[RMDB]
RNA sequence: GGGAACGACUCGAGUAGAGUCGAAAAAUGCCGCAUUCAGCGACGGUGACUCUAGUGGGCGACUGUCCAUCUAGCGUUGACAUCUACAUACUAUAUAGUAAUACCAAUACUCAAGACUACGAAACGGGAUGCACUACGAGUUCGCUCGUAGUGCAUCAAAAGAAACAACAACAACAAC
Reactivity to DMS in 0.01 (KOAc 150mM, MgCl2 10mM, bicine 150mM(pH8.5), 24C), signal-to-noise 1, nucleotides 027 to 126: a030u000g000c170c050g000c100a140u050u000c160a090g060c040g000a120c010g000g080u000g080a010c000u000c000u010a000g060u130g000g000g020c040g060a300c170u000g000u000c040c000a000u010c080u040a050g000c100g000u000u020g000a110c000a060u000c020u000a150c030a080u000a050c150u000a240u000a040u030a000g000u000a040a100u000a050c170c100a110a070u040a090c000u000c080a050a230g000a090c100u000a010c150g000a040a050a000c050g000g000
Reactivity to 2A3 in 0.01 (KOAc 150mM, MgCl2 10mM, bicine 150mM(pH8.5), 24C), signal-to-noise 2, nucleotides 027 to 126: a000u140g020c000c000g080c040a110u100u100c090a000g040c000g160a050c030g060g000u030g010a010c000u030c010u000a000g000u010g050g000g000c020g170a270c160u280g050u010c010c000a090u060c000u000a000g000c020g010u000u040g010a000c020a040u030c020u020a000c000a160u120a090c140u010a050u120a080u120a240g050u050a000a030u020a130c000c120a050a000u070a150c000u000c120a080a000g040a080c000u110a010c110g140a120a050a000c020g010g000